Structure probing data (DMS and 2A3) for a 207-nucleotide construct.
For 2A3, 5,295 sequencing reads were counted.
The data come from the RNA Mapping Database (RMDB), library OK3TST.
The RNA was probed in 150 mM KOAc, 10 mM MgCl2 and 150 mM bicine (pH 8.5) at 24 C.
Reactivities are rounded to 0.1 and cut off at 0 and 3.
RNA sequence: GGGAACGACUCGAGUAGAGUCGAAAACGCAUGCGAAAGCAUGCGGCUAUGCUAAUGCAUGGCGACCCCGAUCACGUUGACUUAGGGGCGUAUGUGGUUAUUAUUCCGCAUACGAUUACCAGUGUCUGUUAUUAUUCAGAUACAUGGACGUCAACUACGACGUAAUAGGGUUCGCCCUAUUACGUCGAAAAGAAACAACAACAACAAC
Reactivity to DMS in 0.01 (KOAc 150mM, MgCl2 10mM, bicine 150mM(pH8.5), 24C), signal-to-noise 2, nucleotides 027 to 156: c010g000c040a000u000g020c000g030a180a140a240g040c020a010u000g010c000g000g000c030u000a030u000g010c010u010a140a150u010g000c000a030u000g010g020c020g010a190c020c000c010c020g010a140u000c090a080c020g010u000u010g020a060c020u000u000a240g030g010g000g020c020g000u000a010u000g000u000g000g010u000u000a190u010u010a300u000u000c010c020g030c000a000u000a030c030g000a150u000u000a090c000c000a170g000u000g020u010c000u010g000u010u010a170u000u000a220u000u000c000a010g000a040u000a000c020a050u000g030g020a140c080g010u000c000a020a030c000u000a260
Reactivity to 2A3 in 0.01 (KOAc 150mM, MgCl2 10mM, bicine 150mM(pH8.5), 24C), signal-to-noise 6, nucleotides 027 to 156: c000g000c000a000u000g010c020g040a090a020a010g000c000a000u000g000c000g010g000c010u010a000u010g000c030u160a300a110u300g010c000a000u000g000g000c000g120a130c000c000c010c000g020a040u140c070a030c200g000u000u000g000a000c010u020u100a030g000g000g020g000c010g000u010a000u000g010u010g000g060u080u060a190u200u080a120u210u090c000c000g000c000a000u000a000c010g010a030u010u090a080c020c010a010g010u000g010u000c000u000g100u050u030a250u170u080a160u110u160c010a000g010a010u000a010c070a150u030g020g000a030c040g000u000c000a010a000c000u030a010
Values cover nucleotides 27 to 156.